[RMDB]
RNA sequence: GGGAACGACUCGAGUAGAGUCGAAAAUGAAAGUAGUCUCCUGCAGCGUCUGGGGUUUCCGUUGCAGUCCUCGGAACCAGGACCUCGGCGUGGCCUAGCGAGUUAUGGCGACGAUGGCCGUGAAAAAGUAAAACUCUGAGUUCGCUCAGAGUUUUACAAAAGAAACAACAACAACAAC
Reactivity to DMS in 0.01 (KOAc 150mM, MgCl2 10mM, bicine 150mM(pH8.5), 24C), signal-to-noise 1, nucleotides 027 to 126: u000g020a050a090a160g000u000a090g000u000c040u000c020c040u000g000c050a140g020c070g020u000c060u000g000g020g000g000u000u000u000c030c020g010u000u000g030c050a080g010u010c030c010u020c140g020g010a060a080c130c070a210g000g000a060c060c020u000c020g000g000c010g030u000g000g000c030c030u000a130g000c030g010a070g010u010u000a120u020g020g010c020g000a100c090g010a120u010g000g010c030c000g000u000g000a050a030a060a070a070